[RMDB]
RNA sequence: GGGAACGACUCGAGUAGAGUCGAAAAGAACAACGAUGGAAUAAGUGCAAGGAGUGCGUUCCAGCAUGGUUAGUGUUUUUUUGGUGAUCUGUAGAACAAAAAAUAAACAUGCAAUAUUAAACCAUGCUAGCCUGGCGAACAGGUGGGUAAAUCACUCAUGACUCGAAUUUUUCGAAAUUCGAGUCAUAAAAGAAACAACAACAACAAC
Reactivity to DMS in 0.01 (KOAc 150mM, MgCl2 10mM, bicine 150mM(pH8.5), 24C), signal-to-noise 2, nucleotides 027 to 156: g020a120a080c070a100a060c100g000a060u000g010g020a100a090u000a100a110g010u010g020c070a100a150g010g030a160g020u000g020c020g010u010u000c020c040a090g020c020a020u000g010g010u010u000a180g000u030g040u000u000u000u000u000u000u000g020g050u000g030a160u010c080u010g010u000a180g010a100a060c040a020a010a040a020a020a090u020a080a000a020c040a020u000g020c070a040a100u020a100u010u000a100a110a030c000c010a040u010g000c010u010a120g020c050c010u000g000g030c070g010a080a110c050a040g000g000u010g000g000g000u000a020a080a110u030c070a050c080u030c070
Reactivity to 2A3 in 0.01 (KOAc 150mM, MgCl2 10mM, bicine 150mM(pH8.5), 24C), signal-to-noise 3, nucleotides 027 to 156: g030a000a040c040a000a040c040g060a060u100g030g040a120a060u140a180a080g020u040g060c070a050a030g060g010a030g020u060g030c020g020u060u010c010c000a010g000c000a000u030g050g000u060u030a070g010u010g040u010u020u000u000u000u020u080g070g020u100g040a150u080c080u080g140u200a060g070a060a010c030a050a060a000a010a000a040u150a040a050a000c010a000u050g010c040a080a080u070a090u190u240a040a000a010c000c000a000u010g040c000u000a010g000c000c000u020g010g010c040g060a080a050c010a010g000g040u060g020g000g000u090a120a130a020u080c020a030c070u060c030